The record gives the reactivity of an RNA of 177 nucleotides to 2A3 and DMS. DMS adducts were read by reverse transcription with MarathonRT. For DMS, 2,079 sequencing reads were counted. Values cover nucleotides 27 to 126.
[RMDB]
RNA sequence: GGGAACGACUCGAGUAGAGUCGAAAAGAUAUGGAUCUACCAAGGACGAUAAGCUGCCAUCGGAAACGAUGGUCAGCUUUUGACGUCCGACGUAGAUCCUAAGUCAAAACAGACCUUCGGGUCUGAACUGUAUCAUGGACUUCGGUCCAUGAUACAGAAAAGAAACAACAACAACAAC
Reactivity to 2A3 in 0.01 (KOAc 150mM, MgCl2 10mM, bicine 150mM(pH8.5), 24C), signal-to-noise 1, nucleotides 027 to 126: g010a010u060a010u170g010g000a000u000c000u000a010c020c040a100a080g030g000a010c030g070a060u000a170a020g010c030u000g020c060c000a000u000c020g000g000a080a010a020c020g020a010u000g010g030u060c000a010g000c050u010u000u030u030g030a030c000g000u000c000c010g010a000c000g020u010a000g010a000u000c000c000u000a010a010g000u000c010a010a010a160a240c000a000g000a000c020c000u110u180c300g150g000g000u000c010u000g000a090a070
Reactivity to DMS in 0.01 (KOAc 150mM, MgCl2 10mM, bicine 150mM(pH8.5), 24C), signal-to-noise 3, nucleotides 027 to 126: g040a040u010a300u010g000g000a000u000c000u000a010c000c060a190a300g000g000a050c000g030a110u020a010a020g020c010u000g010c000c000a000u000c000g010g000a170a080a180c000g000a010u010g000g020u000c000a000g020c030u000u010u000u030g000a220c130g040u000c000c000g050a200c300g000u000a000g000a020u000c000c000u000a000a100g010u000c040a130a060a070a230c010a000g000a000c000c010u010u020c260g050g020g020u000c000u010g000a040a230
Notes
Conditions: 150 mM KOAc, 10 mM MgCl2 and 150 mM bicine (pH 8.5), 24 C. High 2A3 reactivity points to a flexible backbone, as in loops and unpaired stretches.